[RMDB]
RNA sequence: GGGAACGACUCGAGUAGAGUCGAAAACGAUCCAAGGCACGCCAAACCUCUGGAACCCACCCGAGAGGCAUUUCUCGUCAAUCUAUAUCGCACUGUGCAAGCCAGCAGUCGCCUUCCCGUCGUCGACCCUCCUAAUUGAGUUCGCUCAAUUAGGAGGAAAAGAAACAACAACAACAAC
Reactivity to 2A3 in 0.01 (KOAc 150mM, MgCl2 10mM, bicine 150mM(pH8.5), 24C), signal-to-noise 2, nucleotides 027 to 126: c030g030a020u010c000c050a060a050g060g010c050a030c080g000c000c020a080a160a120c010c000u040c080u030g020g040a070a080c010c010c010a010c000c020c000g070a030g010a020g050g050c060a060u040u140u020c080u020c030g060u010c040a050a100u040c040u120a150u030a030u220c010g040c010a020c100u050g000u050g070c040a060a020g070c000c020a000g040c010a000g050u050c030g000c020c010u000u040c030c010c010g000u040c040g040u030c040g080a080c010
Reactivity to DMS in 0.01 (KOAc 150mM, MgCl2 10mM, bicine 150mM(pH8.5), 24C), signal-to-noise 2, nucleotides 027 to 126: c160g020a100u010c010c040a090a100g010g020c070a050c070g020c040c040a090a170a110c040c010u010c050u000g000g000a060a100c040c020c020a080c090c030c040g020a070g020a030g000g010c120a150u000u000u000c040u000c020g000u010c110a090a060u000c100u000a080u010a060u000c060g020c010a070c100u010g020u010g000c020a040a090g000c050c050a050g000c080a020g020u000c040g020c020c050u000u010c030c020c020g010u000c140g010u000c040g000a150c140